RNA sequence: GGGAACGACUCGAGUAGAGUCGAAAAGAACCAUAAUAAAACUGUGGAUAACUUACUAAAGUCUUAGGAGGAACUUGGUCAUAGUUGAUAUUGAAUAGAGAGAACAAGUGUCUGGGACUUUCUGCCAUGUUAUCGACAACUUCGGUUGUCGAUAACAAAAAGAAACAACAACAACAAC
Reactivity to DMS in 0.01 (KOAc 150mM, MgCl2 10mM, bicine 150mM(pH8.5), 24C), signal-to-noise 2, nucleotides 027 to 126: g000a290a300c000c020a000u010a040a230u010a090a050a080a100c110u020g020u070g000g000a150u010a000a120c050u000u000a290c010u010a000a060a080g000u010c010u000u000a010g010g020a070g000g000a020a020c010u000u000g000g000u020c050a060u000a060g010u000u000g000a160u000a120u010u090g000a080a130u010a120g000a090g020a090g000a030a100c000a100a040g020u000g000u000c070u000g020g030g000a030c090u030u000u000c140u080g030c100c070a020
Reactivity to 2A3 in 0.01 (KOAc 150mM, MgCl2 10mM, bicine 150mM(pH8.5), 24C), signal-to-noise 2, nucleotides 027 to 126: g030a030a000c000c000a050u070a070a110u140a010a110a140a060c090u030g000u000g000g000a070u030a230a000c000u060u100a070c000u070a010a010a010g000u020c000u090u080a090g030g000a050g060g070a020a020c000u080u000g050g000u040c000a130u050a180g030u100u190g080a100u100a070u080u160g030a080a000u090a000g180a000g020a000g000a070a020c000a000a000g000u000g010u050c000u020g010g000g030a000c000u000u010u010c030u020g020c070c000a050